[RMDB]
RNA sequence: GGGAACGACUCGAGUAGAGUCGAAAACUUUAAUGAUGGAAGCAAUUGGAUUAUCUGGUAUGACUGAAACGCCAUUAGUCAUUAUUAAUACUCAACGAGGUGGACCUUCUACUGGAUUACCUACGAACAUAAAAGCCCAGUUCGCUGGGCUUUUAUGAAAAGAAACAACAACAACAAC
Reactivity to DMS in 0.01 (KOAc 150mM, MgCl2 10mM, bicine 150mM(pH8.5), 24C), signal-to-noise 1, nucleotides 027 to 126: c080u000u000u000a050a080u010g000a080u000g020g010a110a080g010c080a060a070u000u000g010g000a080u000u000a050u010c030u000g030g020u000a050u000g010a150c020u000g000a040a090a180c260g010c120c010a060u000u000a030g040u020c000a020u000u010a020u000u000a050a030u000a110c040u010c070a040a080c100g020a040g000g010u000g010g030a110c030c030u010u020c120u010a060c100u000g000g000a110u000u000a040c010c000u010a110c120g030a210a170
This 177-nucleotide RNA was probed chemically with DMS. For DMS, 739 sequencing reads were counted. It was measured as part of the RMDB library OK2TRN. The reactions ran in a buffer of 150 mM KOAc, 10 mM MgCl2 and 150 mM bicine (pH 8.5), at 24 C.